[RMDB]
RNA sequence: GGGAACGACUCGAGUAGAGUCGAAAAGCAAAGGUAAAUAACUGUGAUAAAACCUCCGAAGGGCUUAGAAACGAGGGGGUAAUCAGUGCUCCAGUUGGAGUCCGUGGGUUGAAGGCUAGUGCUGUGCUCAUUAGCCCCUCUUCGGAGGGGCUAAUGAAAAAGAAACAACAACAACAAC
Reactivity to DMS in 0.01 (KOAc 150mM, MgCl2 10mM, bicine 150mM(pH8.5), 24C), signal-to-noise 1, nucleotides 027 to 126: g020c040a040a130a130g000g000u010a030a100a130u000a030a060c050u000g010u000g010a070u000a080a100a120a150c020c010u010c020c010g020a120a070g000g020g040c070u010u020a120g000a120a070a080c060g010a210g020g030g000g000g000u010a080a070u030c020a090g030u010g000c040u000c010c030a230g010u020u010g030g020a050g010u000c070c060g010u010g040g000g000u000u000g020a080a100g000g020c020u010a030g000u000g020c000u010g020u020g000c100
Chemical mapping of a 177-nucleotide RNA with DMS. DMS adducts were read by reverse transcription with MarathonRT. The DMS profile rests on 913 reads. The data come from the RNA Mapping Database (RMDB), library OK2TST.